[RMDB]
RNA sequence: GGGAACGACUCGAGUAGAGUCGAAAAUGAGAACUGGAAAGAGUAAAAUGAUAACUUACCUUAGCAUUGCCAAGAACUUCAGCAGACAACAAGCAAUUCUAUUUAUUUUAUGUUGUGUAUACAUCUUGAUCAUUAGCAAGACAUUAAGCUUUAACCAGAUAUUAUUAGGAUUCGUCCUAAUAAUAUCAAAAGAAACAACAACAACAAC
Reactivity to 2A3 in 0.01 (KOAc 150mM, MgCl2 10mM, bicine 150mM(pH8.5), 24C), signal-to-noise 4, nucleotides 027 to 156: u100g000a030g020a050a070c100u080g010g070a060a050a020g060a030g030u090a040a070a070a060u110g040a040u040a080a060c020u040u050a060c010c000u020u020a020g020c020a060u040u080g040c030c010a040a030g050a070a060c020u100u080c050a030g000c020a000g030a100c010a060a010c010a080a020g030c010a020a040u120u010c060u090a110u060u240u030a120u040u150u150u060a100u130g010u000u000g000u010g000u010a010u000a130c040a050u010c010u040u040g010a040u060c040a140u040u040a010g050c000a030a030g020a040c020a050u090u120a080a030g010c010u080u050u040a060a010c050c040a010
Reactivity to DMS in 0.01 (KOAc 150mM, MgCl2 10mM, bicine 150mM(pH8.5), 24C), signal-to-noise 2, nucleotides 027 to 156: u020g030a110g010a070a200c040u030g010g020a090a070a120g000a090g020u010a040a080a070a090u000g030a100u010a070a050c080u020u000a090c060c030u000u000a050g010c020a060u010u010g020c060c030a050a150g010a110a080c010u000u010c040a120g040c020a100g010a040c040a030a120c050a040a090g010c030a080a100u000u000c050u010a110u010u000u020a080u040u020u000u010a120u050g000u010u020g020u010g020u010a070u000a090c070a040u010c030u000u010g030a080u000c080a080u010u000a030g000c000a030a000g030a050c060a030u000u010a090a170g020c020u000u000u000a020a120c100c010a250